The record gives the reactivity of an RNA of 177 nucleotides to 2A3 and DMS.

RNA sequence: GGGAACGACUCGAGUAGAGUCGAAAAACGACUGAAGAUGGUGGGGACUUGUUAAUGCGUUUUUCUCACCGAUUUAUCCUUCUGUUAUCGCUAUUAUUAGCAAGCUUGCCUCUGUAUGCUCAACGCGCGAUAGCACGAUGUUCGCAUCGUGCUAUCGAAAAGAAACAACAACAACAAC
Reactivity to 2A3 in 0.01 (KOAc 150mM, MgCl2 10mM, bicine 150mM(pH8.5), 24C), signal-to-noise 4, nucleotides 027 to 126: a010c030g050a020c050u020g030a030a000g030a070u160g000g000u040g000g010g000g000a010c010u070u050g070u130u160a230a090u170g030c040g060u040u020u000u100u000c020u010c010a020c000c010g020a020u020u060u060a110u080c020c000u020u020c010u010g050u060u040a090u100c040g000c020u020a040u210u020a060u090u070a190g010c040a050a010g010c000u060u070g010c010c000u040c030u070g020u080a050u120g000c030u020c050a080a080c070g020c010g000
Reactivity to DMS in 0.01 (KOAc 150mM, MgCl2 10mM, bicine 150mM(pH8.5), 24C), signal-to-noise 3, nucleotides 027 to 126: a050c120g010a090c050u000g000a050a040g000a130u000g010g020u010g010g020g010g020a020c230u000u000g000u000u020a100a100u010g020c040g000u000u010u000u010u010c020u010c000a010c000c000g000a080u040u020u030a090u020c140c010u000u000c020u000g010u000u020a080u010c110g000c000u000a070u030u010a110u030u010a020g000c000a080a080g000c060u010u000g000c010c020u000c030u000g000u020a040u010g030c040u000c070a040a060c080g010c050g000
The data come from the RNA Mapping Database (RMDB), library OK1LIB. The 2A3 profile rests on 4,091 reads. For DMS the reverse transcriptase was MarathonRT. For 2A3 the reverse transcriptase was SuperScript II with manganese.